[RMDB]
RNA sequence: GGGAACGACUCGAGUAGAGUCGAAAAUAGUGCUCUUAAACUAGUGUUAUUGUGGGCCGGUACUAUUACUUUGAACAAAUAAGAGUGCUUAAAGCAGGCUUCAAAUGCCUGAUUAUUAUGUGCUUGGCAUAAAACCGUUAUUCGUAACGGUUUUAUGAAAAGAAACAACAACAACAAC
Reactivity to DMS in 0.01 (KOAc 150mM, MgCl2 10mM, bicine 150mM(pH8.5), 24C), signal-to-noise 9, nucleotides 027 to 126: u010a020g030u000g010c010u000c020u000u010a030a110a120c170u010a080g000u010g010u010u010a050u010u010g020u010g010g000g010c050c050g010g000u010a030c080u010a050u010u010a070c080u000u010u020g020a090a100c130a050a070a150u010a030a040g000a020g020u000g010c010u000u000a050a050a100g000c010a010g000g000c010u000u010c300a050a100a100u010g000c000c000u000g000a040u010u010a080u020u010a050u010g010u000g000c000u000u000g020g000
Reactivity to 2A3 in 0.01 (KOAc 150mM, MgCl2 10mM, bicine 150mM(pH8.5), 24C), signal-to-noise 7, nucleotides 027 to 126: u110a000g010u010g010c000u010c000u050u080a090a110a040c070u040a070g110u020g050u180u080a140u070u130g030u070g030g020g040c020c020g030g010u030a030c020u020a040u130u040a040c050u070u090u140g060a120a030c040a090a040a020u060a050a010g000a000g000u010g000c010u030u090a030a010a020g030c000a000g000g000c000u100u080c130a110a080a050u130g000c000c000u010g000a010u010u030a100u030u050a060u070g040u000g010c000u010u050g040g010
This 177-nucleotide RNA was probed chemically with DMS and 2A3. Reactivities are rounded to 0.1 and cut off at 0 and 3. The reactions ran in a buffer of 150 mM KOAc, 10 mM MgCl2 and 150 mM bicine (pH 8.5), at 24 C. For 2A3 the reverse transcriptase was SuperScript II with manganese. It was measured as part of the RMDB libraries RFM100 and RFMREP.